Structure probing data (2A3 and DMS) for a 207-nucleotide construct. Conditions: 150 mM KOAc, 10 mM MgCl2 and 150 mM bicine (pH 8.5), 24 C. The 2A3 profile rests on 17,846 reads.
[RMDB]
RNA sequence: GGGAACGACUCGAGUAGAGUCGAAAACAGUUGUUCGCAACUGCGACGUCCUAAGUCCCAUGUGGUCAUGGGAGAGCGAUAAGUGUCGGAAACGACACUUUUGACGCUCGAAGAACAUGACCUGUGGGAUAUGGAACCUGAACCCGUUCGCGGGUAAGUACAAAAAUAAAUUCGUUUAUUUUUGUACAAAAGAAACAACAACAACAAC
Reactivity to 2A3 in 0.01 (KOAc 150mM, MgCl2 10mM, bicine 150mM(pH8.5), 24C), signal-to-noise 9, nucleotides 027 to 156: c020a010g000u020u030g040u080u100c160g020c130a050a050c040u050g030c030g080a060c070g080u030c010c000u050a120a040g040u000c030c010c000a030u130g150u200g190g000u000c000a000u010g020g010g010a040g000a000g000c010g010a020u010a080a000g010u000g000u000c010g010g040a070a060a050c000g000a000c000a010c000u020u010u010u040g070a020c010g000c000u000c010g030a170a020g020a020a010c000a000u000g000a010c000c000u010g000u000g000g000g000a000u000a000u010g000g000a020a030c010c040u060g060a060a080c020c010c000g030u090u060c250g000c020g060g000g020u040a080a030
Reactivity to DMS in 0.01 (KOAc 150mM, MgCl2 10mM, bicine 150mM(pH8.5), 24C), signal-to-noise 4, nucleotides 027 to 156: c030a030g020u000u000g010u000u010c220g000c000a050a050c020u000g000c010g020a160c100g000u020c010c010u010a110a300g010u000c000c000c010a040u000g020u000g060g010u000c000a020u010g000g020g010a170g000a020g030c010g030a190u000a030a020g020u000g020u000c000g000g010a150a130a300c000g010a030c000a000c000u000u000u000u000g020a300c090g020c000u010c010g010a080a220g010a170a200c010a010u010g000a000c010c000u000g010u000g010g010g000a020u000a030u000g010g000a040a070c030c020u000g020a120a080c010c000c000g010u000u000c210g030c030g010g020g040u000a010a120